[RMDB]
RNA sequence: GGGAACGACUCGAGUAGAGUCGAAAAGCCGGUAGCGGUUAACUUGAGCGACGGCGAGUUUCAACUGCCUCCGGAACAAGUUCAUGCCGUUGGCGUGAAGGCUCUGGAUGCAAUGAAGGAUGCCACGAGUCUCAUUAUGAUUCGUCAUAAUGAGACUAAAAGAAACAACAACAACAAC
Reactivity to 2A3 in 0.01 (KOAc 150mM, MgCl2 10mM, bicine 150mM(pH8.5), 24C), signal-to-noise 7, nucleotides 027 to 126: g050c020c020g040g100u160a060g040c050g020g040u080u110a100a090c050u100u130g110a030g080c040g100a100c040g030g010c040g000a010g020u020u030u050c070a090a060c020u010g000c000c010u000c000c010g000g040a020a020c020a090a070g060u020u010c010a010u020g000c020c060g300u170u300g010g000c000g000u010g010a030a040g060g000c010u010c010u020g010g010a020u040g030c030a050a050u060g020a020a020g070g020a050u170g020c010c010a060c070g040
Reactivity to DMS in 0.01 (KOAc 150mM, MgCl2 10mM, bicine 150mM(pH8.5), 24C), signal-to-noise 8, nucleotides 027 to 126: g020c010c010g010g000u010a160g020c010g020g010u000u000a060a070c080u000u000g010a150g020c030g010a100c130g000g010c010g000a150g010u000u000u000c060a080a120c100u000g000c010c040u000c000c010g010g010a040a020c040a070a110g010u000u000c010a010u000g010c000c010g010u010u010g020g010c010g020u000g000a020a060g010g010c030u000c010u000g000g010a050u000g000c050a030a080u000g000a140a080g000g010a120u010g010c020c020a100c220g000
Chemical mapping of a 177-nucleotide RNA with 2A3 and DMS. Values are in units of 0.01, from 0 to 300, in steps of 10. 2A3 is a SHAPE reagent: it acylates the 2'-hydroxyl of flexible nucleotides of all four kinds. 2A3 adducts were read by reverse transcription with SuperScript II with manganese. Reactivities are given for positions 27 through 126. Source: RMDB library OK2TRN, as collected in RNAgym.